RNA sequence: GGGAACGACUCGAGUAGAGUCGAAAAUACGAUGGCCGUACGUACGGCGCGAUCAUGUAGUGUCAGCGCUGGCCCAGCGAGCAGCGCGUACGGCCCGUACGAUAGGAUCGCGCGAUCGAUACGGCGCGCCAAAGAGCGCGUUCGCGCGCUCUUUGGCAAAAGAAACAACAACAACAAC
Reactivity to 2A3 in 0.01 (KOAc 150mM, MgCl2 10mM, bicine 150mM(pH8.5), 24C), signal-to-noise 1, nucleotides 027 to 126: u240a060c050g110a140u120g210g010c020c010g000u000a000c000g080u050a060c030g130g000c010g050c000g000a000u010c030a110u200g050u100a040g060u070g050u060c040a030g010c000g020c020u070g150g160c020c090c030a070g070c050g000a070g040c030a000g010c030g010c040g010u050a040c000g000g020c000c000c000g020u030a020c020g030a100u070a150g210g000a030u010c000g000c010g000c020g040a120u040c030g030a040u030a030c050g040g030c020g020c010
Reactivity to DMS in 0.01 (KOAc 150mM, MgCl2 10mM, bicine 150mM(pH8.5), 24C), signal-to-noise 1, nucleotides 027 to 126: u000a090c150g010a160u030g010g040c040c000g030u000a040c060g000u010a170c070g010g010c000g020c000g000a010u000c030a190u020g000u020a100g000u000g000u000c030a200g020c000g040c010u000g010g010c120c000c040a210g000c210g040a180g010c030a030g010c030g030c010g000u010a040c110g010g000c040c030c000g000u010a030c050g000a100u000a080g030g010a030u000c020g010c000g000c010g010a060u000c070g000a150u000a020c040g010g000c000g000c160
The record gives the reactivity of an RNA of 177 nucleotides to 2A3 and DMS. 2A3 adducts were read by reverse transcription with SuperScript II with manganese. The reactions ran in a buffer of 150 mM KOAc, 10 mM MgCl2 and 150 mM bicine (pH 8.5), at 24 C. It was measured as part of the RMDB library OK2TRN.